[RMDB]
RNA sequence: GGGAACGACUCGAGUAGAGUCGAAAAGUGAUGUGCGACAGUUUACUGGAGGCUGCUUUGCGGUCGAGUCGUAUGACCGGCCAUAUGCGACGUGUACCUGAGGCCGGAUAGGUACUAGCACAUCUGAGGCUUCUUCGGUGUUCGCAUCGAGGAGGCCAAAAGAAACAACAACAACAAC
Reactivity to DMS in 0.01 (KOAc 150mM, MgCl2 10mM, bicine 150mM(pH8.5), 24C), signal-to-noise 9, nucleotides 027 to 126: g010u020g000a010u000g010u000g010c010g010a130c160a030g010u010u020u020a080c050u010g010g000a150g000g000c010u000g000c020u020u020u030g010c030g000g020u000c010g000a110g010u000c020g010u010a080u020g000a070c010c010g000g000c000c010a080u030a030u010g000c040g000a050c040g010u020g010u020a040c080c040u010g000a150g000g010c010c010g000g000a140u030a020g000g010u010a020c020u010a170g000c000a010c010a010u000c000u000g000a180
Reactivity to 2A3 in 0.01 (KOAc 150mM, MgCl2 10mM, bicine 150mM(pH8.5), 24C), signal-to-noise 9, nucleotides 027 to 126: g170u090g000a000u000g000u000g010c010g040a040c050a030g010u030u100u160a110c040u030g030g030a030g020g000c000u010g000c030u110u130u260g080c020g010g000u010c010g040a060g020u010c010g020u070a050u110g050a050c030c000g020g010c020c010a080u090a020u160g030c020g010a020c030g060u090g060u150a060c010c030u090g020a030g020g000c000c000g000g010a020u040a010g020g000u020a010c000u010a000g000c000a000c000a000u000c000u000g010a010